[RMDB]
RNA sequence: GGGAACGACUCGAGUAGAGUCGAAAACUGAGACGCUUCGGCGUCUCAGAAAUGGAACACAGGCGAAGGAACCAAGAGCUAUCAUGCCAAUGACCACGUGGAAAACUCAUACGUUCGCGUAUGAGAACGUUCCCAAGUUGUUCGCAACUUGGGAACGAAAAGAAACAACAACAACAAC
Reactivity to 2A3 in 0.01 (KOAc 150mM, MgCl2 10mM, bicine 150mM(pH8.5), 24C), signal-to-noise 1, nucleotides 027 to 126: c010u000g000a020g000a010c020g000c030u110u050c300g170g030c010g010u000c000u050c010a000g000a000a000a000u080g040g030a030a020c040a000c070a050g050g050c050g090a120a040g030g020a110a030c040c030a060a020g020a000g100c040u070a020u270c010a030u110g070c030c000a020a000u080g020a050c040c020a020c030g030u130g020g100a040a040a030a020c000u000c000a010u020a000c010g000u000u030c210g000c000g050u020a000u010g000a000g000a010a000
Reactivity to DMS in 0.01 (KOAc 150mM, MgCl2 10mM, bicine 150mM(pH8.5), 24C), signal-to-noise 1, nucleotides 027 to 126: c000u000g000a000g010a010c020g050c010u000u050c180g030g060c000g000u010c000u000c000a000g020a020a140a070u000g010g000a120a070c040a050c040a080g050g020c110g000a080a100g010g000a080a080c040c040a060a050g020a140g030c050u010a010u010c080a080u020g010c030c040a060a070u010g010a080c080c020a060c080g010u000g000g000a090a050a090a090c000u000c000a000u010a010c000g000u000u000c190g000c000g020u000a020u000g000a050g000a040a050